[RMDB]
RNA sequence: GGGAACGACUCGAGUAGAGUCGAAAAGAUAUGGAAACUCUACCUCCUCUUGGACCACAUUUCGGAAACGAAAUGUGCUAGAGGAGAGUAGAGGUUUCCUAAGUCAAAAUCGGAGUUCGCUCCGAAACGAAAUACCAUAGUUCGCUAUGGUAUUUCGAAAAGAAACAACAACAACAAC
Reactivity to 2A3 in 0.01 (KOAc 150mM, MgCl2 10mM, bicine 150mM(pH8.5), 24C), signal-to-noise 3, nucleotides 027 to 126: g000a020u100a060u210g000g000a010a020a010c000u000c000u000a010c000c000u000c000c010u030c010u030u190g100g100a170c150c000a010c010a030u010u010u000c010g000g040a080a110a080c010g000a000a020a000u000g000u000g000c000u010a000g000a000g000g000a000g020a000g010u010a000g000a000g020g000u010u010u000c000c000u020a130a030g080u030c040a050a020a030a300u050c010g010g000a010g020u100u100c170g110c120u000c000c010g020a040a010a010
Reactivity to DMS in 0.01 (KOAc 150mM, MgCl2 10mM, bicine 150mM(pH8.5), 24C), signal-to-noise 4, nucleotides 027 to 126: g000a060u010a300u000g000g000a030a020a040c000u000c000u000a010c000c010u000c000c000u010c010u020u000g020g000a140c300c020a010c020a010u020u000u000c000g010g000a140a090a220c000g020a000a000a000u000g010u000g000c020u000a020g010a010g020g000a020g010a020g020u000a010g000a020g000g010u000u000u000c000c000u000a060a150g000u020c040a080a070a140a140u000c010g010g000a020g030u010u010c300g010c010u010c010c000g000a000a060a140
About this RNA:
Structure probing data (2A3 and DMS) for a 177-nucleotide construct. For DMS, 4,749 sequencing reads were counted. For DMS the reverse transcriptase was MarathonRT.